RNA sequence: GGGAACGACUCGAGUAGAGUCGAAAAGUGACACCUCAACCUGAAGAACAGAAAGAAAGGAAAACCACAGAAAUGCAAAGUCCAAUGCAGCCAGUGGACCAAGCGAGCCUUCCAGGUGAGAGAUGAAUCUGUCCUCCAGCUAACUCCUGCUAGCGCAUGAUUAUGGAGCAUUCGUGCUCCAUAAUCAAAAAGAAACAACAACAACAAC
Reactivity to 2A3 in 0.01 (KOAc 150mM, MgCl2 10mM, bicine 150mM(pH8.5), 24C), signal-to-noise 2, nucleotides 027 to 156: g040u040g030a010c010a020c040c000u010c040a050a100c020c010u040g050a050a050g030a130a060c050a080g140a100a150a020g080a080a090a010g030g000a070a100a030a010c000c020a020c030a070g080a050a130a010u120g000c010a040a080a040g010u000c030c010a060a050u100g010c010a020g040c060c010a040g020u020g000g000a010c020c000a050a010g030c050g060a010g040c020c000u070u000c030c030a000g030g000u030g000a050g000a000g000a020u070g020a050a050u020c010u070g040u050c010c000u000c040c040a010g000c020u020a020a060c030u040c040c000u060g080c030u080a040g050c070g030c080a040
Reactivity to DMS in 0.01 (KOAc 150mM, MgCl2 10mM, bicine 150mM(pH8.5), 24C), signal-to-noise 2, nucleotides 027 to 156: g000u010g030a300c060a120c010c050u010c020a080a060c040c070u010g010a100a080g040a080a230c070a120g020a110a080a120g010a090a060a110g020g000a110a060a090a120c050c010a130c020a100g010a040a080a120u000g000c030a030a160a090g010u000c040c050a030a050u010g040c030a140g010c150c020a080g000u010g010g000a070c000c020a050a110g030c050g010a110g010c000c010u000u000c050c000a070g010g010u000g000a110g010a080g000a010u020g000a110a170u010c090u000g000u000c010c000u000c030c010a150g000c050u000a020a090c060u000c040c030u000g030c060u000a100g010c010g020c040a130